[RMDB]
RNA sequence: GGGAACGACUCGAGUAGAGUCGAAAAGAACGGGACUCGUAAGACCUGGAUUGGGCUGCUCCGAUGUAAGUCGGUGAUACUCCGGUAGCCAAGGAUCUUCCUUGGCGAGCACGGUGAGAAUCGGCCCGCUACGAUUGAGGUUCGCCUCAAUCGUAGCAAAAGAAACAACAACAACAAC
Reactivity to 2A3 in 0.01 (KOAc 150mM, MgCl2 10mM, bicine 150mM(pH8.5), 24C), signal-to-noise 1, nucleotides 027 to 126: g020a080a000c000g000g020g050a060c040u040c120g070u160a020a080g020a020c000c020u040g060g070a120u080u190g030g020g030c010u020g010c000u000c010c000g030a000u000g070u140a090a160g020u000c000g010g050u010g000a010u030a020c010u000c000c010g000g020u030a000g000c000c000a000a000g040g000a070u080c050u170u150c090c000u000u000g000g000c030g000a010g020c090a090c040g000g000u010g010a070g050a000a090u020c000g020g030c000c000c000
Reactivity to DMS in 0.01 (KOAc 150mM, MgCl2 10mM, bicine 150mM(pH8.5), 24C), signal-to-noise 2, nucleotides 027 to 126: g020a220a050c040g000g000g000a140c060u000c170g020u000a080a120g010a040c040c010u000g000g040a130u010u020g010g010g010c040u000g000c110u010c000c000g000a000u000g010u000a190a160g010u000c000g000g010u010g000a080u010a280c100u000c000c010g000g010u040a240g000c000c000a020a020g020g000a130u010c300u000u000c000c000u000u000g010g030c000g000a060g020c040a080c040g010g050u000g020a070g000a060a050u030c100g000g000c010c000c020